[RMDB]
RNA sequence: GGGAACGACUCGAGUAGAGUCGAAAACGGGGCGCCACCCUGGUCGUGGGGGACAUCUCCUUCCUGCACGAUGUCAACGGCCUCAACCUGCUGCGCACAGGGGAGAUGCGGCCGCCGCUGACGGUGGUCGUCCGUACCGGUUCGCCGGUACGGACGAAAAAGAAACAACAACAACAAC
Reactivity to 2A3 in 0.01 (KOAc 150mM, MgCl2 10mM, bicine 150mM(pH8.5), 24C), signal-to-noise 2, nucleotides 027 to 126: c040g000g000g000g040c020g070c020c010a040c010c000c090u080g120g020u040c010g040u040g020g040g000g010g020a020c000a100u020c050u000c000c000u080u080c000c010u090g040c050a030c040g090a130u110g010u110c080a030a020c090g000g030c020c020u070c020a090a110c000c040u020g000c020u050g070c070g020c040a030c010a050g000g000g050g010a070g010a030u060g020c050g050g040c000c020g060c040c040g000c120u130g020a040c080g010g000u010g000g010
Reactivity to DMS in 0.01 (KOAc 150mM, MgCl2 10mM, bicine 150mM(pH8.5), 24C), signal-to-noise 2, nucleotides 027 to 126: c110g000g000g000g000c120g000c040c040a110c020c000c140u000g010g020u000c040g000u000g000g010g010g020g020a070c070a050u000c030u000c080c070u010u010c030c010u030g000c090a070c070g010a040u000g030u000c080a060a080c060g000g000c010c020u000c060a110a130c050c000u000g020c030u000g030c070g020c110a140c040a050g010g020g030g010a130g000a100u000g010c150g000g000c030c010g010c000c000g000c080u000g000a070c030g010g000u000g000g000
Structure probing data (2A3 and DMS) for a 177-nucleotide construct. The reactions ran in a buffer of 150 mM KOAc, 10 mM MgCl2 and 150 mM bicine (pH 8.5), at 24 C. For 2A3, 1,887 sequencing reads were counted. For DMS the reverse transcriptase was MarathonRT. 2A3 adducts were read by reverse transcription with SuperScript II with manganese. For DMS, 1,874 sequencing reads were counted.